[RMDB]
Chemical mapping of a 207-nucleotide RNA with 2A3 and DMS. The reactions ran in a buffer of 150 mM KOAc, 10 mM MgCl2 and 150 mM bicine (pH 8.5), at 24 C. DMS adducts were read by reverse transcription with MarathonRT. The data come from the RNA Mapping Database (RMDB), library OK3TST. Reactivities are given for positions 27 through 156.
RNA sequence: GGGAACGACUCGAGUAGAGUCGAAAACGGGGUUGGCUAUAGUUGAUUUCGAACCGUAUGCUUAUGUAUAUGGAAUGAUUUGUACGCUUUACGCAUGUGUACACUCACUCUCAGUUCACUCUUGUGAGAGAAGGGAGAGAGAGAUAUUUUGCGAUUAGUAAUGGGCGAUCUUCGGAUUGUUCAUUGCAAAAGAAACAACAACAACAAC
Reactivity to 2A3 in 0.01 (KOAc 150mM, MgCl2 10mM, bicine 150mM(pH8.5), 24C), signal-to-noise 3, nucleotides 027 to 156: c030g000g000g010g000u050u030g030g000c030u060a030u040a120g030u020u030g040a170u040u030u030c030g010a030a010c010c000g010u010a000u010g020c020u140u130a060u230g020u000a010u010a010u050g030g010a060a070u040g040a100u090u020u070g010u010a010c010g000c010u020u110u080a020c010g000c010a000u040g020u000g000u000a000c010a010c020u010c000a030c000u000c000u000c000a070g050u030u030c010a020c030u030c020u080u210g050u160g070a020g000a000g010a020a030g070g010g000a010g000a010g000a000g000a000g000a000u020a080u120u130u100u060g000c010g020a020u010u090a030
Reactivity to DMS in 0.01 (KOAc 150mM, MgCl2 10mM, bicine 150mM(pH8.5), 24C), signal-to-noise 2, nucleotides 027 to 156: c060g020g020g030g040u000u000g020g040c060u000a100u010a120g030u000u000g000a110u010u010u000c020g010a050a170c030c010g010u010a010u000g020c020u000u000a090u000g030u000a040u000a040u000g020g020a100a110u000g010a090u000u010u010g010u000a050c080g030c040u000u000u000a120c070g050c040a050u000g020u000g010u000a030c010a120c110u000c000a140c010u000c010u000c000a080g030u000u000c030a070c020u000c030u000u010g030u010g000a090g010a060g020a070a110g000g010g010a060g010a030g000a050g010a030g020a070u000a020u000u000u000u000g010c030g010a180u000u000a120
For 2A3, 2,147 sequencing reads were counted.